[RMDB]
RNA sequence: GGGAACGACUCGAGUAGAGUCGAAAAGUUUAUCAAAAACACAGCACUCUGCAAAGACGCAAGUCGAAGUAUAGGGUGUGACACGUGACCAAUGCCGAAAGAUUAAGGCAAGGGGUUAGCCGCAAGGUGGAUGAUCGCAAUUCGUUGCGAUCAUCCAAAAAGAAACAACAACAACAAC
Reactivity to DMS in 0.01 (KOAc 150mM, MgCl2 10mM, bicine 150mM(pH8.5), 24C), signal-to-noise 1, nucleotides 027 to 126: g000u000u050u050a140u030c210a080a090a040a050a050c000a030c120a240g000c000a000c010u000c000u000g030c000a130a080a170g000a060c000g020c210a190a110g000u000c060g010a100a230g000u040a080u040a040g020g030g010u000g000u000g000a060c300a100c100g010u030g000a040c000c000a070a020u000g000c050c010g000a030a110a160g000a170u000u000a010a240g000g000c070a000a170g100g030g000g000u000u000a040g020c000c000g040c300a070a050g000g140
Reactivity to 2A3 in 0.01 (KOAc 150mM, MgCl2 10mM, bicine 150mM(pH8.5), 24C), signal-to-noise 1, nucleotides 027 to 126: g000u020u020u020a300u290c040a000a010a000a020a000c010a000c000a000g050c000a000c000u050c050u060g030c000a200a130a000g000a000c000g000c000a090a130g000u000c000g000a090a000g000u000a050u240a300g000g030g000u010g000u000g110a000c010a000c120g000u000g010a000c040c020a000a040u010g030c000c000g210a240a020a020g100a060u260u050a060a060g010g000c000a000a020g000g000g000g010u080u080a010g040c000c000g140c050a000a010g220g000

Chemical mapping of a 177-nucleotide RNA with DMS and 2A3. The DMS profile rests on 1,130 reads. The reactions ran in a buffer of 150 mM KOAc, 10 mM MgCl2 and 150 mM bicine (pH 8.5), at 24 C.